The record gives the reactivity of an RNA of 177 nucleotides to 2A3 and DMS. For 2A3 the reverse transcriptase was SuperScript II with manganese. The 2A3 profile rests on 908 reads. The DMS profile rests on 2,077 reads.

RNA sequence: GGGAACGACUCGAGUAGAGUCGAAAAAUAGAAAUCAUAGCGGUCGACUAUAAGAAGGCGGAGAAGGCGCUCGCAGCCGCUCUUGAAACGGCAGAGUCUGUUGCCCGCGAGCUAGGAGUAGAGUAUAACUUUUGCAUAUGUUCGCAUAUGCAAAAGUAAAAGAAACAACAACAACAAC
Reactivity to 2A3 in 0.01 (KOAc 150mM, MgCl2 10mM, bicine 150mM(pH8.5), 24C), signal-to-noise 1, nucleotides 027 to 126: a050u180a020g090a030a080a010u170c020a060u150a060g060c060g000g000u020c020g000a020c030u080a020u000a270a090g080a040a060g040g000c000g000g040a090g040a030a060g050g000c100g000c020u010c040g020c030a010g000c000c000g020c000u000c000u020u060g070a120a100a090c040g010g000c100a050g000a000g070u090c050u170g130u120u060g190c000c000c000g010c030g010a000g050c030u080a060g060g060a060g020u040a020g010a060g070u120a080u060a300
Reactivity to DMS in 0.01 (KOAc 150mM, MgCl2 10mM, bicine 150mM(pH8.5), 24C), signal-to-noise 3, nucleotides 027 to 126: a090u020a090g000a120a060a090u000c080a060u000a050g010c080g040g010u000c050g000a050c030u010a100u000a120a080g000a060a110g000g000c040g020g020a090g020a090a070g010g010c090g020c020u000c050g030c040a180g020c010c010g000c020u000c030u020u000g000a110a050a050c050g010g020c070a140g000a050g010u000c010u000g020u010u000g010c020c010c050g000c040g010a040g010c040u010a060g000g010a090g030u020a040g010a120g000u000a070u000a100